This 177-nucleotide RNA was probed chemically with 2A3 and DMS.

RNA sequence: GGGAACGACUCGAGUAGAGUCGAAAAGCUGAUUCGUCACUUCAUCGCCAACGACUUCUACGGCGGCAAGUGCCUGCCGAUUAACACGGUUCACGAUGCGUGUUACUUCGACACUCACAAAGACGUACGCGAUAAAUCGCUUCGGCGAUUUAUCGCGAAAAGAAACAACAACAACAAC
Reactivity to 2A3 in 0.01 (KOAc 150mM, MgCl2 10mM, bicine 150mM(pH8.5), 24C), signal-to-noise 2, nucleotides 027 to 126: g010c020u030g020a080u100u110c080g070u060c080a010c080u060u010c020a070u040c050g000c040c000a050a070c030g030a080c010u050u010c020u120a100c010g060g000c030g000g010c040a100a080g070u000g020c010c000u050g010c020c000g000a020u030u010a010a010c010a000c070g060g070u090u090c140a080c200g180a110u180g060c010g010u000g010u000u020a070c030u000u000c010g000a000c010a000c050u050c010a040c030a030a120a040g030a030c000g070u110a040
Reactivity to DMS in 0.01 (KOAc 150mM, MgCl2 10mM, bicine 150mM(pH8.5), 24C), signal-to-noise 1, nucleotides 027 to 126: g000c010u000g040a080u000u000c100g030u000c030a020c050u000u000c100a000u000c080g020c000c010a050a300c180g000a070c070u020u000c060u000a070c100g040g000c010g030g000c120a110a120g000u000g020c020c030u000g000c070c020g020a030u020u020a040a050c000a010c020g000g060u000u000c200a140c160g000a090u010g010c030g000u000g000u000u000a010c160u000u000c000g060a040c050a080c040u010c010a070c080a000a050a090g030a140c080g000u010a080
Annotation
For 2A3, 1,488 sequencing reads were counted. DMS adducts were read by reverse transcription with MarathonRT.